[RMDB]
RNA sequence: GGGAACGACUCGAGUAGAGUCGAAAAGGCGGAGCAGCGGCCCGCAGAGGGAGGCGGUGGCGCCCACGGAACAGCCGCGUCUAAUUGGCUGAGCGCGGAGCCGCCCGGUGAUUGGUGGGGGCGGAAGGAUGCAACAACCAUUCGUGGUUGUUGCAUCAAAAGAAACAACAACAACAAC
Reactivity to 2A3 in 0.01 (KOAc 150mM, MgCl2 10mM, bicine 150mM(pH8.5), 24C), signal-to-noise 3, nucleotides 027 to 126: g040g050c040g020g070a110g020c100a030g030c070g130g030c030c000c000g000c030a070g040a120g030g010g010a050g020g020c030g010g020u060g020g030c020g060c030c000c000a040c050g070g050a210a100c030a040g030c010c020g020c020g070u070c080u140a220a270u220u200g040g000c040u020g050a040g080c050g010c000g000g000a040g000c000c000g000c020c000c000g000g060u130g040a190u090u130g020g040u130g020g000g000g020g040c000g000g020a020a040g050
Reactivity to DMS in 0.01 (KOAc 150mM, MgCl2 10mM, bicine 150mM(pH8.5), 24C), signal-to-noise 2, nucleotides 027 to 126: g000g010c050g000g000a080g000c090a170g000c060g030g010c020c000c020g000c070a070g000a130g020g000g000a070g000g010c030g000g020u020g010g000c030g000c060c020c010a070c080g000g020a100a160c040a010g000c000c000g010c300g000u060c150u050a150a180u070u030g010g010c040u000g010a130g010c090g050c060g000g000a300g000c040c020g020c010c000c060g010g010u020g000a120u020u020g000g000u000g000g000g020g010g000c050g000g000a090a050g000

Chemical mapping of a 177-nucleotide RNA with 2A3 and DMS. Source: RMDB library OK1LIB, as collected in RNAgym. For DMS the reverse transcriptase was MarathonRT. The RNA was probed in 150 mM KOAc, 10 mM MgCl2 and 150 mM bicine (pH 8.5) at 24 C. The DMS profile rests on 3,553 reads. Values cover nucleotides 27 to 126.